[RMDB]
RNA sequence: GGGAACGACUCGAGUAGAGUCGAAAAGAUAUGGAAACACGGUAGACAUGACGGGUGCACACAAAGAGGAUCGGAAACGAUCCUCUUUGUGUGCACCGACGUCAACAGCUACGUGUUUCCUAAGUCACCUAUCCGUAUUGUUCGCAAUACGGAUAGGAAAAGAAACAACAACAACAAC
Reactivity to DMS in 0.01 (KOAc 150mM, MgCl2 10mM, bicine 150mM(pH8.5), 24C), signal-to-noise 1, nucleotides 027 to 126: g010a090u010a300u000g000g010a020a000a000c000a000c000g020g030u000a000g000a080c090a220u000g030a000c000g010g020g000u020g010c000a020c000a020c020a000a050a010g000a030g070g040a040u010c000g010g020a130a090a210c040g010a030u010c000c010u000c000u000u000u010g000u010g000u010g000c000a010c020c000g000a040c040g010u000c000a030a060c300a140g000c010u000a000c010g010u000g000u000u000u000c010c000u000a000a050g010u010c040a290

Conditions: 150 mM KOAc, 10 mM MgCl2 and 150 mM bicine (pH 8.5), 24 C. Structure probing data (DMS) for a 177-nucleotide construct. In probing experiments dimethyl sulfate is read out at A N1 and C N3, which are open when not base-paired. The DMS profile rests on 2,102 reads.